[RMDB]
An RNA of 207 nucleotides, treated with 2A3 and read out base by base. Values are in units of 0.01, from 0 to 300, in steps of 10. For 2A3, 728 sequencing reads were counted. Source: RMDB library RNAMAK, as collected in RNAgym.
RNA sequence: GGGAACGACUCGAGUAGAGUCGAAAAGAGGCUUCGGCCUCAACGCCUCCUAAGUCUAAGGGAGACUGAACCAGAGCGAAGAACUGGAUCGGAAACGAUCCAGGGAGCUCUGGAAGUCAUCGAUCUUAGAUAUGGAAAUUAUUCACUUCGGUGAAAAUAGGAUCAUUUGUUUCGACAAAUGAUCCUAAAAAGAAACAACAACAACAAC
Reactivity to 2A3 in 0.01 (KOAc 150mM, MgCl2 10mM, bicine 150mM(pH8.5), 24C), signal-to-noise 1, nucleotides 027 to 156: g010a000g080g000c070u120u110c300g180g010c040c000u000c000a080a000c040g070c010c010u020c000c000u040a140a050g000u000c000u010a000a000g000g020g020a040g000a030c010u040g020a020a020c000c000a000g000a010g010c000g200a300a060g010a110a000c000u000g000g000a000u000c000g000g000a130a000a000c020g000a000u000c000c000a000g000g000g000a000g000c000u000c000u000g000g020a000a000g060u050c000a100u130c040g040a030u050c020u000u000a000g000a000u030a020u000g010g090a000a150a050u300u170a140u060u040c000a000c010u080u150c260g080g010u080g030a070a070a010a080

Reactivities are given for positions 27 through 156.